[RMDB]
RNA sequence: GGGAACGACUCGAGUAGAGUCGAAAACGUCCGAUGCGGAAGUUCGUGCAUCCGUCGAACGCGAAAGUCGGACGGCGGCCAUGAGUCGCAACGCAAAGCCGCGGCAAGUGGAGUUAGCGAGAAGAGAAAAAGUCACGAGUGUUCGCACUCGUGACAACCUCUUCCACAGCUUCGGCUGUGGAAGAGGAAAAGAAACAACAACAACAAC
Reactivity to 2A3 in 0.01 (KOAc 150mM, MgCl2 10mM, bicine 150mM(pH8.5), 24C), signal-to-noise 1, nucleotides 027 to 156: c000g000u000c000c010g000a000u060g030c080g070g120a080a060g000u010u030c020g030u070g050c030a160u060c090c010g070u000c000g010a010a010c010g010c000g150a180a140a000g000u070c000g000g000a000c000g000g000c000g040g010c000c000a110u170g000a030g000u000c000g010c060a060a060c040g020c030a170a150a000g040c070c040g000c000g010g000c060a110a020g010u030g020g020a090g070u080u120a010g040c070g060a000g030a080a080g020a010g020a000a110a030a000a000g000u000c000a010c000g010a000g000u020g030u130u130c160g000c090a000c000u010c000g000u000g000a000c000a000a000
The data come from the RNA Mapping Database (RMDB), library M2RFPK. The record gives the reactivity of an RNA of 207 nucleotides to 2A3.